[RMDB]
RNA sequence: GGGAACGACUCGAGUAGAGUCGAAAAUCUGUGACGCCAUCAGCGACUCGGUUCUGGACGCGCUUCUAGCGGCGGACCCGCGCUCACGUGUCGCGGUCGAGACGCUGGUGACCACCGGGCAGGUGCACGUAAUUACCCGCUUCGGCGGGUAAUUACGAAAAGAAACAACAACAACAAC
Reactivity to DMS in 0.01 (KOAc 150mM, MgCl2 10mM, bicine 150mM(pH8.5), 24C), signal-to-noise 1, nucleotides 027 to 126: u000c010u000g000u000g000a100c140g050c080c010a020u000c040a010g000c010g000a090c030u000c000g040g020u000u000c070u000g040g020a100c010g000c000g010c140u010u010c180u020a050g020c020g020g020c130g020g010a200c300c010c010g000c020g000c060u000c200a070c080g000u000g010u000c000g000c160g000g040u020c010g000a090g020a090c020g020c000u000g010g020u000g000a030c040c030a080c020c010g000g000g000c050a030g000g020u010g020c110a120
Reactivity to 2A3 in 0.01 (KOAc 150mM, MgCl2 10mM, bicine 150mM(pH8.5), 24C), signal-to-noise 1, nucleotides 027 to 126: u020c030u000g080u050g110a110c040g050c020c020a010u010c000a010g000c020g040a040c040u000c030g040g070u260u100c040u170g100g050a030c010g010c000g030c100u180u080c060u230a060g000c010g120g000c030g060g010a040c000c010c020g020c010g010c010u040c050a150c080g100u040g030u090c000g000c000g120g000u020c010g000a010g000a030c010g010c000u000g010g030u000g000a000c010c010a030c000c020g000g030g090c040a030g000g020u080g050c020a010